[RMDB]
RNA sequence: GGGAACGACUCGAGUAGAGUCGAAAAAAGAAGUAUAAUAUGCGUGUGGAAGACUACGAACCUUACCCGGAUGAUGGCAUGGGGUAUGGCGACUACCCGAAGCUCCCUGACCGCUCACAGCAUGAGAGAGAUCCAUGGUAUAGCUGGGACCAGCCGGAUUCAUCGAAGGAUUCGUCCUUCGAUGAAUAAAAGAAACAACAACAACAAC
Reactivity to DMS in 0.01 (KOAc 150mM, MgCl2 10mM, bicine 150mM(pH8.5), 24C), signal-to-noise 1, nucleotides 027 to 156: a140a100g000a080a070g020u000a060u040a050a150u020a050u000g020c100g000u000g010u020g010g010a150a090g010a090c020u000a070c050g000a120a130c030c000u000u000a050c020c000c050g020g030a060u010g020a120u000g000g050c040a060u000g000g010g030g050u000a030u000g000g040c080g030a110c070u030a030c030c000c020g000a080a160g030c020u000c010c020c020u000g000a060c010c020g040c040u000c070a130c070a060g050c040a300u010g000a200g030a070g020a060g000a030u000c000c040a050u000g020g000u010a070u000a120g050c040u030g000g010g020a040c030c010a100g000c010c020g020g000
Reactivity to 2A3 in 0.01 (KOAc 150mM, MgCl2 10mM, bicine 150mM(pH8.5), 24C), signal-to-noise 2, nucleotides 027 to 156: a010a000g100a060a040g020u180a140u050a290a270u160a020u160g020c010g000u080g000u020g050g040a020a040g050a080c040u030a050c100g090a020a050c010c000u090u120a070c060c000c000g040g000a050u090g020a010u060g020g000c050a060u040g000g000g000g050u080a040u140g020g000c020g010a060c010u040a020c000c010c010g040a040a020g020c000u030c030c030c000u000g080a020c000c020g020c040u060c050a090c030a030g020c010a030u050g000a000g000a000g000a030g010a160u030c020c020a040u050g000g020u120a060u070a080g040c050u020g010g010g040a060c010c000a010g030c020c020g090g000